[RMDB]
RNA sequence: GGGAACGACUCGAGUAGAGUCGAAAAUCAUCAAGACCUGGUCGCGUCGGUCGACCAUCAUUCCGGACUUCAUCGGCCAUACCUUUGCGGUGCACGACGGCCGCAAGCACGUCCCCGUGUUCGUCACCAAUGCCGCAUAGUUCGCUAUGCGGCAUUGAAAAGAAACAACAACAACAAC
Reactivity to 2A3 in 0.01 (KOAc 150mM, MgCl2 10mM, bicine 150mM(pH8.5), 24C), signal-to-noise 2, nucleotides 027 to 126: u030c010a010u050c090a020a050g070a130c000c030u040g000g020u000c010g000c020g110u090c100g080g100u150c010g010a050c010c000a000u140c020a060u150u040c030c030g010g030a020c040u050u050c080a140u060c010g040g000c000c010a070u080a120c050c020u070u020u070g040c010g000g060u060g060c040a030c140g110a010c020g010g010c000c000g000c010a000a010g090c000a020c070g070u080c000c010c000c020g030u010g060u080u090c070g050u030c030a030c020
Reactivity to DMS in 0.01 (KOAc 150mM, MgCl2 10mM, bicine 150mM(pH8.5), 24C), signal-to-noise 3, nucleotides 027 to 126: u000c090a100u010c140a110a130g020a110c110c060u000g020g020u000c020g030c050g010u000c080g000g010u010c030g010a040c020c000a030u000c080a130u000u000c040c040g030g000a050c060u000u000c140a080u010c030g000g020c020c050a080u000a080c130c050u000u000u000g000c000g000g010u000g020c090a100c070g000a040c070g010g010c020c010g000c030a010a040g030c090a090c070g000u000c010c000c020c100g020u000g010u010u000c060g000u000c060a130c140
The data come from the RNA Mapping Database (RMDB), library OK2TRN. This 177-nucleotide RNA was probed chemically with 2A3 and DMS. The reactions ran in a buffer of 150 mM KOAc, 10 mM MgCl2 and 150 mM bicine (pH 8.5), at 24 C. For DMS, 2,938 sequencing reads were counted.